[RMDB]
RNA sequence: GGGAACGACUCGAGUAGAGUCGAAAAGAUACUUCGGUAUCCAUGAUGAUAUGGAGUGCGCAAGGCCUUAUCGACGAAGGUGUUUCGGAAACGAAACACCAGAGAUAAGGAACUACCUUGCCAGCACUCCUAAGUCCACCAGGUUGUUCGCAACCAAGAUUGAUACGUGUUUCGACACGUAUCAAUCAAAAGAAACAACAACAACAAC
Reactivity to DMS in 0.01 (KOAc 150mM, MgCl2 10mM, bicine 150mM(pH8.5), 24C), signal-to-noise 1, nucleotides 027 to 156: g000a070u000a040c010u020u020c300g020g050u000a000u020c000c020a140u000g010a070u000g000a040u010a090u000g010g020a040g010u020g130c020g060c010a030a020g010g000c000c000u000u000a000u000c000g020a130c140g030a180a250g010g020u000g050u000u000u010c020g000g030a090a030a050c000g040a020a000a030c010a010c000c000a000g000a030g020a020u000a040a000g020g030a040a020c060u020a300c030c000u000u000g000c010c050a300g040c000a030c000u000c010c010u010a000a110g010u000c030c100a110c050c020a110g000g010u010u000g040u000u000c120g060c020a020a040c000c000a050a300
Reactivity to 2A3 in 0.01 (KOAc 150mM, MgCl2 10mM, bicine 150mM(pH8.5), 24C), signal-to-noise 2, nucleotides 027 to 156: g030a000u070a000c040u090u130c300g100g040u010a020u030c040c000a080u190g110a120u130g000a000u050a010u030g000g010a000g010u000g000c040g000c020a000a000g000g030c000c000u010u010a010u010c060g280a300c000g000a170a010g000g000u000g000u000u000u000c000g010g010a000a000a000c000g000a000a000a030c000a000c010c000a010g010a000g000a000u000a000a000g000g020a010a000c010u050a060c010c000u010u000g030c020c000a000g000c000a000c000u000c000c000u000a010a000g010u000c000c000a020c020c030a020g080g010u000u010g000u010u070c180g030c200a050a060c060c040a020a050